Background
Structure probing data (2A3) for a 177-nucleotide construct. The RNA was probed in 150 mM KOAc, 10 mM MgCl2 and 150 mM bicine (pH 8.5) at 24 C. It was measured as part of the RMDB library OK2TST. Reactivities are rounded to 0.1 and cut off at 0 and 3. For 2A3, 630 sequencing reads were counted.

[RMDB]
RNA sequence: GGGAACGACUCGAGUAGAGUCGAAAAGACGUGUCCUAAAUGACUAUUUGAUUCUUCUGAACGCACUUCAGUUCUUACCAUACCAAAUGAUUUGUCGACUAAUUCUAUAAUUUCAUCGUCAUCAAGCCCGGAUUGCAGAAUUCGUUCUGCAAUCCGGAAAAGAAACAACAACAACAAC
Reactivity to 2A3 in 0.01 (KOAc 150mM, MgCl2 10mM, bicine 150mM(pH8.5), 24C), signal-to-noise 1, nucleotides 027 to 126: g000a040c060g060u050g060u000c000c020u070a060a080a050u160g040a050c020u050a090u090u060u090g110a160u060u030c030u020u020c000u080g120a020a010c040g000c030a020c050u070u050c030a060g030u000u070c020u100u040a170c100c000a020u060a130c020c020a030a110a170u020g040a030u080u130u070g030u020c000g020a030c060u110a020a100u110u030c100u100a100u050a300a040u020u100u100c020a030u010c020g000u010c000a020u000c020a090a060g000c030